[RMDB]
RNA sequence: GGGAACGACUCGAGUAGAGUCGAAAAGGACAGAUUCUGGGUUUAUUUUGAAGGUAAAGCCAACAAAUUUUGUUCAUGGCUUGGAUAAGGGCUAUGAGAGAAAGAGAGGAGUCAAGGAUACACCAAGAUUUUCAGCCCAAGCAACUAGAGAGAUGAACAUACCGCCUGCAUUCGUGCAGGCGGUAUGAAAAGAAACAACAACAACAAC
Reactivity to 2A3 in 0.01 (KOAc 150mM, MgCl2 10mM, bicine 150mM(pH8.5), 24C), signal-to-noise 1, nucleotides 027 to 156: g020g030a000c000a010g070a010u000u030c010u030g000g000g000u070u130u020a060u030u090u090u100g060a090a020g040g030u060a060a000a010g010c020c010a030a010c090a050a100a070u140u140u100u140g100u100u110c070a030u050g030g020c000u020u010g020g010a010u000a160a090g020g000g030c050u020a100u040g010a080g010a000g010a070a090a010g070a000g000a000g000g020a050g010u020c000a050a000g040g060a010u030a120c070a000c020c040a010a070g030a180u100u070u070u090c020a030g000c000c010c020a020a070g030c000a000a030c080u130a020g000a000g000a000g020a090u030g020a050a000